Source information: Chemical mapping of a 177-nucleotide RNA with DMS and 2A3. Values cover nucleotides 27 to 126.
[RMDB]
RNA sequence: GGGAACGACUCGAGUAGAGUCGAAAAUGGUACUAAUACAGAAGAUAGUUUAGAUGAGAGUUUUGAGUAUGAAACAGGUAAGAUUGAAACUCACACUAUAGUUGCGCCUGGAGAACUUAAUAGAUUGAUUUAUUUAUGCUUUCGAGCAUAAAUAAAUAAAAGAAACAACAACAACAAC
Reactivity to DMS in 0.01 (KOAc 150mM, MgCl2 10mM, bicine 150mM(pH8.5), 24C), signal-to-noise 8, nucleotides 027 to 126: u030g010g010u000a070c060u010a070a050u030a100c090a080g010a090a100g010a090u020a060g010u010u010u020a050g010a120u020g000a080g010a040g000u000u010u010u010g010a040g010u020a060u010g000a110a100a130c110a050g010g000u010a070a100g010a120u010u000g010a030a030a020c030u000c030a080c090a040c060u010a040u020a050g020u000u010g010c130g010c040c020u000g010g000a080g000a060a070c080u010u020a030a060u010a080g000a100u020u010g000
Reactivity to 2A3 in 0.01 (KOAc 150mM, MgCl2 10mM, bicine 150mM(pH8.5), 24C), signal-to-noise 6, nucleotides 027 to 126: u070g040g030u040a020c030u090a010a110u090a110c040a030g140a110a040g030a140u110a080g060u090u080u110a120g020a130u160g060a050g030a010g080u000u000u080u070g010a010g030u130a060u210g110a150a100a020c060a010g080g050u080a050a040g050a220u050u060g050a020a050a000c020u060c030a040c000a000c030u090a040u060a210g040u050u050g020c020g020c000c020u000g020g020a080g000a040a020c050u090u080a110a040u090a160g140a120u010u210g020
The RNA was probed in 150 mM KOAc, 10 mM MgCl2 and 150 mM bicine (pH 8.5) at 24 C.